[RMDB]
RNA sequence: GGGAACGACUCGAGUAGAGUCGAAAAUCGUCGUACAGGGGUUUUACACUUGAUGGAUUGCUAUCCAGUUUCAUUACUGACCUGUACGCUGAAGGUAAGGACUGGAUAUGGCUAAAUUUAUUAAGUGCAAUUAUAUUGUCUUCGGACAAUAUAAUUGAAAAGAAACAACAACAACAAC
Reactivity to DMS in 0.01 (KOAc 150mM, MgCl2 10mM, bicine 150mM(pH8.5), 24C), signal-to-noise 6, nucleotides 027 to 126: u030c030g000u020c010g010u010a020c050a040g000g000g000g010u010u010u010u020a090c000a010c000u000u010g010a010u000g000g000a000u000u010g020c040u010a020u010c000c000a000g000u000u000u030c130a110u010u010a020c020u010g000a190c020c030u010g000u000a030c050g010c090u030g010a120a160g000g000u000a020a040g010g000a010c000u000g000g000a020u010a040u040g010g030c090u030a040a040a030u000u000u010a010u000u000a000a010g010u010g010
Reactivity to 2A3 in 0.01 (KOAc 150mM, MgCl2 10mM, bicine 150mM(pH8.5), 24C), signal-to-noise 9, nucleotides 027 to 126: u080c010g080u010c010g000u030a010c030a060g000g030g010g010u010u050u050u100a020c000a000c000u010u000g000a000u000g000g020a010u010u130g030c010u010a010u000c000c000a010g010u010u050u130c120a110u050u060a030c010u040g120a140c000c030u040g030u050a020c040g000c010u050g050a110a030g040g000u030a020a020g080g010a010c000u000g000g000a010u020a060u110g080g000c060u160a040a040a080u020u040u020a010u010u010a010a000g000u000g000